Annotation
This 177-nucleotide RNA was probed chemically with 2A3 and DMS. For 2A3 the reverse transcriptase was SuperScript II with manganese. For 2A3, 2,853 sequencing reads were counted. DMS adducts were read by reverse transcription with MarathonRT. The DMS profile rests on 7,001 reads. It was measured as part of the RMDB library OK2TRN.

[RMDB]
RNA sequence: GGGAACGACUCGAGUAGAGUCGAAAAAUCAGGAAUUUUAAGCAUAAAUUGGGGUAUCAGUUACCCAUCUUGCUGUGUCUAGACAGGGGAUCUAAUUGAUGGGCUCUACCCAAAGGAUCAUGUUACACCAAUACUAGUUCUUCGGAACUAGUAUUGGAAAAGAAACAACAACAACAAC
Reactivity to 2A3 in 0.01 (KOAc 150mM, MgCl2 10mM, bicine 150mM(pH8.5), 24C), signal-to-noise 3, nucleotides 027 to 126: a020u150c080a060g130g040a060a020u130u130u090u170a200a020g060c010a030u060a140a120a080u090u080g020g010g020g010u060a030u170c040a020g050u120u100a030c000c000c030a010u000c000u050u050g040c030u010g020u040g030u060c120u100a030g030a170c060a040g050g000g010g000a010u010c030u080a050a060u120u070g020a010u010g010g010g000c020u020c020u020a030c000c000c000a050a090a000g090g000a050u090c030a030u130g040u060u080a040c050a030
Reactivity to DMS in 0.01 (KOAc 150mM, MgCl2 10mM, bicine 150mM(pH8.5), 24C), signal-to-noise 6, nucleotides 027 to 126: a060u010c060a110g000g010a080a040u000u000u000u000a050a140g010c060a060u000a030a090a100u010u010g010g010g000g020u000a030u000c120a100g020u000u000a090c010c010c030a030u000c030u000u000g020c030u000g000u000g010u020c140u010a090g000a050c040a050g000g010g000g000a040u000c050u010a030a070u000u000g000a070u000g010g010g000c040u000c100u010a070c010c010c020a040a060a110g000g000a070u010c090a060u000g010u000u000a100c190a190